This 177-nucleotide RNA was probed chemically with DMS and 2A3. The DMS profile rests on 1,273 reads. The reactions ran in a buffer of 150 mM KOAc, 10 mM MgCl2 and 150 mM bicine (pH 8.5), at 24 C. For DMS the reverse transcriptase was MarathonRT. The 2A3 profile rests on 1,080 reads.
RNA sequence: GGGAACGACUCGAGUAGAGUCGAAAAGCCACGCUAUUCGUAGCGUGGCGGUUAAGAUCUAGACAAAAACUGUCAAAAAGUCUAGAUCAAAUAAAGUCAGAACGGUCCGGGAUUUCGAUCCCGGAAAGAUGAGUAGUCCAUUCGUGGACUACUCAUCAAAAGAAACAACAACAACAAC
Reactivity to DMS in 0.01 (KOAc 150mM, MgCl2 10mM, bicine 150mM(pH8.5), 24C), signal-to-noise 2, nucleotides 027 to 126: g030c000c000a030c000g010c000u000a030u010u000c090g030u000a010g000c000g030u000g000g010c000g000g000u000u000a080a160g010a000u000c000u010a030g010a000c000a070a090a090a060a170c160u000g030u020c210a080a040a120a110a160g020u000c020u000a000g010a020u000c000a030a030a070u000a050a050a170g000u020c140a100g020a130a100c100g000g040u000c000c000g000g000g000a010u000u010u020c210g000a040u000c000c010c000g000g010a000a030a030
Reactivity to 2A3 in 0.01 (KOAc 150mM, MgCl2 10mM, bicine 150mM(pH8.5), 24C), signal-to-noise 1, nucleotides 027 to 126: g000c010c000a010c010g010c000u040a050u090u090c230g060u080a040g020c000g000u000g000g000c020g000g000u070u040a080a000g010a000u000c010u010a040g000a000c000a010a200a030a150a100c120u160g170u300c090a030a080a030a040a020g010u000c000u010a030g010a010u010c020a000a000a000u090a010a040a020g110u040c080a020g040a210a080c030g050g000u040c000c000g000g000g000a020u080u100u060c160g030a010u000c060c030c010g000g000a000a000a000